[RMDB]
RNA sequence: GGGAACGACUCGAGUAGAGUCGAAAAUUAGAGGUCUCGAUCACAGCGAGACCGGCAGAGACGCUCCCGGGCCGGGUUAGGAACCGGUGCGGCGGGUGGUAUAGGAGCCGGCCGGACCCGGGGAUAACUACUAGGUCAUAUUCGUAUGACCUAGUAGAAAAGAAACAACAACAACAAC
Reactivity to 2A3 in 0.01 (KOAc 150mM, MgCl2 10mM, bicine 150mM(pH8.5), 24C), signal-to-noise 2, nucleotides 027 to 126: u130u090a050g050a060g110g020u000c020u010c010g060a150u190c110a040c080a140g120c010g010a010g010a000c000c000g010g010c020a010g040a000g010a110c040g060c070u050c010c000c000g000g000g000c040c000g010g000g040u090u130a090g090g040a060a050c020c030g000g020u070g070c010g020g000c080g030g070g060u110g020g050u110a110u130a220g080g000a060g000c000c050g070g010c010c000g040g040a140c020c000c010g000g010g000g000a030u060a070a040
Reactivity to DMS in 0.01 (KOAc 150mM, MgCl2 10mM, bicine 150mM(pH8.5), 24C), signal-to-noise 5, nucleotides 027 to 126: u010u020a100g010a230g010g000u000c000u000c000g000a080u000c180a120c290a160g010c000g000a020g010a000c010c000g000g010c060a110g000a130g000a090c080g020c060u000c000c000c000g000g000g010c010c000g010g000g000u000u000a090g030g010a150a120c020c010g010g020u000g010c040g010g010c060g000g010g000u010g010g010u000a060u010a130g010g000a240g010c000c000g000g010c010c020g000g010a100c020c010c010g000g000g010g000a070u010a060a140